[RMDB]
RNA sequence: GGGAACGACUCGAGUAGAGUCGAAAACAUGGGGGCAUCUGACCAUCUUCAAAACUUGGACCCAGAAUUGUUCAUAUCUAAUGAUAUGUAGUGACAAAAGUGGAGCAGAGACUGAAGAAAAUGCCAUCCACUGCCUUGAUCAAUCCAUCCUAUGGGACUAGCACUAAUUAUUCGUAAUUAGUGCUAGAAAAGAAACAACAACAACAAC
Reactivity to 2A3 in 0.01 (KOAc 150mM, MgCl2 10mM, bicine 150mM(pH8.5), 24C), signal-to-noise 8, nucleotides 027 to 156: c060a080u070g010g000g000g000g020c000a010u020c040u070g080a070c040c010a080u020c010u090u020c020a040a070a140a180c020u040u050g030g050a080c010c010c000a020g060a130a080u060u040g020u050u030c000a000u010a020u010c050u170a300a120u270g010a000u010a000u020g020u060a090g100u040g070a000c010a020a050a020a040g020u020g010g030a060g010c040a000g020a020g030a070c060u070g020a050a000g010a050a110a020a000u040g000c010c010a090u050c010c010a030c050u040g030c010c010u060u110g030a080u090c040a040a020u060c040c020a030u070c020c030u120a140u140g080g000g030a030
Reactivity to DMS in 0.01 (KOAc 150mM, MgCl2 10mM, bicine 150mM(pH8.5), 24C), signal-to-noise 5, nucleotides 027 to 156: c050a110u000g000g010g030g020g010c030a040u000c050u010g020a130c030c050a110u010c020u000u000c070a060a080a090a100c030u000u000g010g020a300c020c010c010a110g010a120a110u010u000g010u000u010c000a040u000a010u010c010u020a110a230u010g020a040u000a020u010g020u000a090g020u000g010a110c060a040a060a080a080g020u000g010g010a070g020c030a300g000a120g010a250c120u010g020a050a080g000a050a070a070a080u000g020c010c020a120u000c000c010a030c030u010g010c030c050u000u010g020a100u000c080a060a090u000c030c020a050u000c060c050u000a100u000g000g010g010a210